RNA sequence: GGGAACGACUCGAGUAGAGUCGAAAAGGAAAUAAGGCAGCUUAUGUCUAGGAAAGAAUUUUAUGUGUGUGCUUGAGUUGUCCAUUGCUGUGUAACAAAUUACCCCAAAACUUUGUCACUUAAAACCACUAUCAUUUAUCACUCAUGAUCCUACAGACAUGGACGUAUGAUUCGUCAUACGUCCAUGAAAAGAAACAACAACAACAAC
Reactivity to 2A3 in 0.01 (KOAc 150mM, MgCl2 10mM, bicine 150mM(pH8.5), 24C), signal-to-noise 4, nucleotides 027 to 156: g050g030a040a030a030u140a040a030g040g010c020a010g020c060u150u130a060u110g020u000c050u050a030g010g050a070a050a040g040a080a100u040u100u120u110a120u080g060u000g040u000g000u020g010c020u020u040g000a030g020u050u040g010u060c020c020a030u020u090g000c040u020g020u020g000u090a050a010c010a030a110a080u060u060a070c000c020c020c020a000a150a040a060c040u100u070u090g040u070c030a000c000u070u050a070a080a070a070c020c030a020c050u080a060u120c020a040u030u100u130a060u090c030a020c050u050c010a040u050g060a080u040c000c010u020a100c030a030g040a040
Reactivity to DMS in 0.01 (KOAc 150mM, MgCl2 10mM, bicine 150mM(pH8.5), 24C), signal-to-noise 2, nucleotides 027 to 156: g010g010a100a090a120u000a100a050g040g020c030a090g030c110u010u010a050u000g040u000c040u000a250g020g020a100a100a140g020a060a090u000u010u010u020a060u020g040u000g040u010g010u010g000c060u000u000g020a070g020u000u000g000u000c020c070a240u010u000g010c030u010g000u020g030u000a090a100c040a050a040a090u000u000a130c070c010c030c020a060a070a080a100c090u000u000u000g000u000c050a040c060u000u000a070a090a050a080c080c050a040c050u020a080u020c010a080u000u000u000a070u010c020a040c040u000c030a030u020g010a090u000c020c010u010a060c080a120g010a170

The data come from the RNA Mapping Database (RMDB), library OK3TST. This 207-nucleotide RNA was probed chemically with 2A3 and DMS. Conditions: 150 mM KOAc, 10 mM MgCl2 and 150 mM bicine (pH 8.5), 24 C. DMS adducts were read by reverse transcription with MarathonRT. 2A3 is a SHAPE reagent: it acylates the 2'-hydroxyl of flexible nucleotides of all four kinds.